[RMDB]
RNA sequence: GGGAACGACUCGAGUAGAGUCGAAAAGUAGACACUUGUGGUAUGUGGAGUACAGAUAAGCCAGGGGCAGGCCACGGCACGCUCCAUGAAAGCUAGGAGGGAGUGAAAUAUCAGUGAUCAUCGCAAGCUAAUUUUGACCGUUCGCGGUCAAAAUUAGAAAAGAAACAACAACAACAAC
Reactivity to DMS in 0.01 (KOAc 150mM, MgCl2 10mM, bicine 150mM(pH8.5), 24C), signal-to-noise 1, nucleotides 027 to 126: g040u000a040g030a130c120a080c090u000u010g020u030g020g000u020a080u000g030u010g000g000a050g020u020a050c130a130g010a060u000a030a080g000c070c060a060g050g000g020g030c050a080g030g010c000c020a070c220g010g020c050a030c120g000c020u010c020c000a080u000g000a120a060a030g000c030u000a060g010g020a100g040g000g000a050g020u000g000a050a060a130u020a060u010c080a030g020u010g000a060u010c050a040u010c100g020c100a020a110g000
Notes
Chemical mapping of a 177-nucleotide RNA with DMS. Reactivities are given for positions 27 through 126. Reactivities are rounded to 0.1 and cut off at 0 and 3.